[RMDB]
RNA sequence: GGGAACGACUCGAGUAGAGUCGAAAAUCAAGAAAAGCUACCAUAGGAAAAGUUUUAGGAAACUUACCUACAGAAGAAAGAUUAGAAGGAACCAUAGCUUUAUCCUGUUUAGCGGUAGAUGUAGGAAGCUCAUACUCCAUUUCGAUGGAGUAUGAGCAAAAGAAACAACAACAACAAC
Reactivity to DMS in 0.01 (KOAc 150mM, MgCl2 10mM, bicine 150mM(pH8.5), 24C), signal-to-noise 2, nucleotides 027 to 126: u040c070a120a100g000a090a090a000a190g000c000u000a000c020c040a100u000a100g000g010a020a050a040a000g000u000u020u000u020a150g000g000a000a030a180c040u020u000a110c150c010u000a060c130a150g010a100a060g000a140a100a120g000a140u010u030a080g000a030a010g000g000a100a220c020c000a050u000a050g000c010u000u000u000a140u020c020c000u000g030u010u030u010a100g010c040g020g000u000a030g010a110u020g020u000a070g030g000a070a070
Reactivity to 2A3 in 0.01 (KOAc 150mM, MgCl2 10mM, bicine 150mM(pH8.5), 24C), signal-to-noise 2, nucleotides 027 to 126: u010c000a070a020g100a200a150a030a040g000c000u000a000c000c000a100u060a040g000g000a000a040a030a090g000u000u000u100u180a030g000g000a110a300a000c040u060u030a070c020c000u040a010c060a100g190a190a040g010a110a160a070g110a000u000u200a020g010a100a010g040g000a000a030c010c070a190u060a040g000c000u020u020u010a240u230c000c010u060g060u030u170u100a090g000c040g070g000u120a040g010a110u090g030u020a030g000g170a090a000